[RMDB]
RNA sequence: GGGAACGACUCGAGUAGAGUCGAAAACUAGCUUGACUGUGUUUCAGCCAAUAGGGAACGCAGAUGCGAAAGCAGGGCCUAACGAACCACCUAGUUCCCUCUUUAUGAGGGCAGGUGAUAAGAGAGAUCACAGUGGAGUAUUCGUACUCCACUGUGAAAAAGAAACAACAACAACAAC
Reactivity to 2A3 in 0.01 (KOAc 150mM, MgCl2 10mM, bicine 150mM(pH8.5), 24C), signal-to-noise 6, nucleotides 027 to 126: c030u020a040g020c010u010u100g040a030c010u000g000u000g010u020u000u020c070a140g090c070c000a190a180u190a250g030g000g020a000a000c010g000c010a020g020a110u290g060c040g100a100a020a010g010c030a030g040g000g000c010c030u040a120a040c030g020a030a010c040c000a000c000c000u020a060g040u170u160c000c040c000u010c020u020u270u130a270u300g000a000g000g000g000c010a010g000g000u010g010a010u070a080a000g030a000g010a010g010a010
Reactivity to DMS in 0.01 (KOAc 150mM, MgCl2 10mM, bicine 150mM(pH8.5), 24C), signal-to-noise 5, nucleotides 027 to 126: c010u000a130g010c040u020u010g000a140c000u020g030u000g020u000u020u010c010a110g040c140c160a100a100u030a100g010g000g010a010a020c020g000c010a010g000a090u020g010c210g000a080a040a050g030c000a230g000g010g000c020c040u000a060a090c130g010a110a130c170c000a010c000c000u000a080g000u020u050c000c000c000u000c000u000u010u050a100u040g000a010g000g000g030c080a010g020g000u000g000a050u030a040a140g010a150g000a180g000a180
This 177-nucleotide RNA was probed chemically with 2A3 and DMS.
The RNA was probed in 150 mM KOAc, 10 mM MgCl2 and 150 mM bicine (pH 8.5) at 24 C.